An RNA of 170 nucleotides, treated with 2A3 and DMS and read out base by base. The DMS profile rests on 14,102 reads. Reactivities are rounded to 0.1 and cut off at 0 and 3. 2A3 adducts were read by reverse transcription with SuperScript II with manganese. DMS adducts were read by reverse transcription with MarathonRT.
RNA sequence: GGGAACGACUCGAGUAGAGUCGAAAAUCGGGUGAUCCACCAGGAGGGUGGAGGAGAGACCACCUCCAGAGGACCCCUUCAGCGAACAGAAGAGCUCCCUCCUCCGGAGAGAGAAGACCAUAGCGAUGCGGGAGACACUUCGGUGUCUCCAAAAGAAACAACAACAACAAC
Reactivity to 2A3 in 0.01 (KOAc 150mM, MgCl2 10mM, bicine 150mM(pH8.5), 24C), signal-to-noise 6, nucleotides 027 to 129: u110c010g010g000g000u040g080a240u020c030c020a040c020c010a060g030g000a020g050g090g030u090g020g010a010g070g030a120g000a010g040a030c000c000a020c000c000u000c020c000a010g040a060g050g030a010c010c000c020c000u020u090c040a030g010c010g050a050a010c000a070g110a130a000g020a020g020c000u010c010c000c000u010c000c000u000c000c050g020g000a030g000a000g000a000g000a030a030g040a030c010c010a050u090a010g030c020g060a040u080g040c070g040
Reactivity to DMS in 0.01 (KOAc 150mM, MgCl2 10mM, bicine 150mM(pH8.5), 24C), signal-to-noise 6, nucleotides 027 to 129: u040c000g000g030g030u020g040a160u020c030c040a150c130c100a020g020g040a060g030g040g020u040g040g020a100g050g030a130g030a180g040a060c050c020a110c060c020u030c030c050a050g030a080g020g000a070c120c020c040c000u010u040c030a090g030c080g030a010a060c080a080g030a080a070g000a070g000c040u010c030c000c020u020c020c000u100c090c070g030g000a040g010a000g020a060g000a040a060g000a090c070c010a090u040a100g030c120g000a000u060g020c160g100